[RMDB]
RNA sequence: GGGAACGACUCGAGUAGAGUCGAAAAGGUGAAAUUGUAACAGUAAAGUCAUUUGAUGGUUCAAAUAUUGAAUUACAAGGUGAAGUUUACUUUAGUUAUGAUCAAACUAAAAACGCUAGAGUUCAAUGUAUGCGAGGAAUGAAAGAUGUAACAAUUAUCUAUACUAAUUCUUCGGAAUUAGUAUAGAAAAAGAAACAACAACAACAAC
Reactivity to DMS in 0.01 (KOAc 150mM, MgCl2 10mM, bicine 150mM(pH8.5), 24C), signal-to-noise 3, nucleotides 027 to 156: g030g030u000g010a150a050a030u000u000g010u000a020a020c030a080g020u010a020a040a050g000u010c010a030u000u000u000g000a220u010g000g010u000u000c020a040a230a200u000a150u000u010g000a070a020u000u000a100c070a080a100g010g020u010g000a050a110g010u000u000u010a020c010u010u010u010a080g010u000u000a020u010g010a050u000c030a040a210a050c040u000a030a040a060a090a020c050g000c040u000a060g000a130g010u010u000c030a080a050u010g010u000a030u000g020c060g010a070g010g020a070a080u010g000a110a030a070g000a090u010g000u010a050a160c030a040a060u000u000a100
Reactivity to 2A3 in 0.01 (KOAc 150mM, MgCl2 10mM, bicine 150mM(pH8.5), 24C), signal-to-noise 3, nucleotides 027 to 156: g030g000u040g000a110a020a000u070u080g020u020a050a000c010a010g000u010a010a030a020g030u000c030a050u020u030u180g080a130u060g020g020u050u030c060a040a130a020u160a170u150u110g010a010a010u070u040a040c020a060a030g030g000u000g030a020a040g030u000u020u050a020c000u090u090u090a020g000u010u000a040u080g020a030u050c040a030a010a050c020u120a080a030a100a010a000c050g000c050u050a020g030a030g130u050u080c040a050a040u050g050u080a030u060g080c030g020a020g010g050a060a010u110g030a090a030a040g050a030u130g030u140a030a030c010a020a010u170u110a010